The record gives the reactivity of an RNA of 177 nucleotides to DMS and 2A3.
RNA sequence: GGGAACGACUCGAGUAGAGUCGAAAAAGGGCUGGAUUCGUCCAGCCCUGCACAUUCGUACGCAACCAAGCGUACGUCAUUACGCAAAUGACGUAAAGCGUAGAACCACGGACUUCGGUCCGUGGAAUGAAAUGGGCAAUUUCGAUUGCCCAUUUCAAAAAGAAACAACAACAACAAC
Reactivity to DMS in 0.01 (KOAc 150mM, MgCl2 10mM, bicine 150mM(pH8.5), 24C), signal-to-noise 3, nucleotides 027 to 126: a000g000g000g010c000u000g000g000a020u000u000c220g000u010c000c000a010g000c000c000c000u000g010c130a100c170a110u000u010c010g000u010a020c020g000c000a070a120c120c120a140a160g010c040g000u000a010c000g000u000c090a020u000u000a000c110g010c120a070a080a070u000g010a070c070g020u020a050a080a170g000c020g000u000a040g000a080a200c020c000a020c000g020g000a010c000u000u020c200g020g020u000c000c000g020u000g000g000a040a040
Reactivity to 2A3 in 0.01 (KOAc 150mM, MgCl2 10mM, bicine 150mM(pH8.5), 24C), signal-to-noise 2, nucleotides 027 to 126: a000g000g000g000c000u010g000g000a020u040u000c090g040u000c040c000a000g000c000c010c000u000g000c000a020c000a130u070u100c000g010u010a000c010g000c020a090a150c100c050a130a060g000c000g030u030a000c000g000u000c010a070u060u150a030c030g000c060a070a150a180u170g120a060c070g100u090a100a000a000g020c000g010u030a040g060a080a020c000c000a000c000g000g000a010c010u070u070c300g120g000u000c010c000g000u000g000g010a000a010
Conditions: 150 mM KOAc, 10 mM MgCl2 and 150 mM bicine (pH 8.5), 24 C. Values cover nucleotides 27 to 126.